[RMDB]
RNA sequence: GGGAACGACUCGAGUAGAGUCGAAAAAGCGGUGCAGCACGGUGUCACCGAGGUCGAUGCGCUUGUUGAUGCGUACUCCGUGCACCUCGGUGAGCCGGCGGGUCAAUUCGCGGGCCAGGUCGCCGUGGUCGAAAAGUGUCUUCGGACACUUUUCGACAAAAGAAACAACAACAACAAC
Reactivity to 2A3 in 0.01 (KOAc 150mM, MgCl2 10mM, bicine 150mM(pH8.5), 24C), signal-to-noise 3, nucleotides 027 to 126: a000g040c010g030g000u030g020c020a060g000c050a110c240g000g070u120g280u040c010a000c000c000g020a000g010g020u150c040g000a040u010g010c000g000c030u110u130g120u160u190g220a040u210g000c000g000u020a030c100u140c140c090g040u020g050c030a010c000c000u000c010g000g000u000g000a000g000c000c000g010g000c020g000g010g000u020c040a140a210u180u020c090g020c010g160g000g010c000c060a100g000g160u050c020g000c010c010g000u030g000

An RNA of 177 nucleotides, treated with 2A3 and read out base by base.
The RNA was probed in 150 mM KOAc, 10 mM MgCl2 and 150 mM bicine (pH 8.5) at 24 C.